RNA sequence: GGGAACGACUCGAGUAGAGUCGAAAAUUAAAGGAGGAGGAGGAGUGUGUGUCUUCCCAGCAGCUGAGUAGAACCUCCGCACACACGCGAAAGCUACGAGCAGCAGCAGUGCGGAAACGGUGAAAAACACUCUGCAUGUGUUCGCACAUGCAGAGUGAAAAGAAACAACAACAACAAC
Reactivity to DMS in 0.01 (KOAc 150mM, MgCl2 10mM, bicine 150mM(pH8.5), 24C), signal-to-noise 2, nucleotides 027 to 126: u000u000a060a040a120g020g020a050g000g000a080g000g000a070g020g020a090g060u020g000u010g020u010g010u010c090u000u000c020c010c040a160g020c060a110g000c020u010g030a100g020u020a020g020a100a080c100c030u000c030c000g010c020a060c020a100c190a060c200g000c010g000a090a180a080g000c000u000a100c150g020a120g020c040a080g000c160a110g000c070a110g000u000g000c000g020g000a020a050a070c120g000g000u000g000a040a020a060a080a150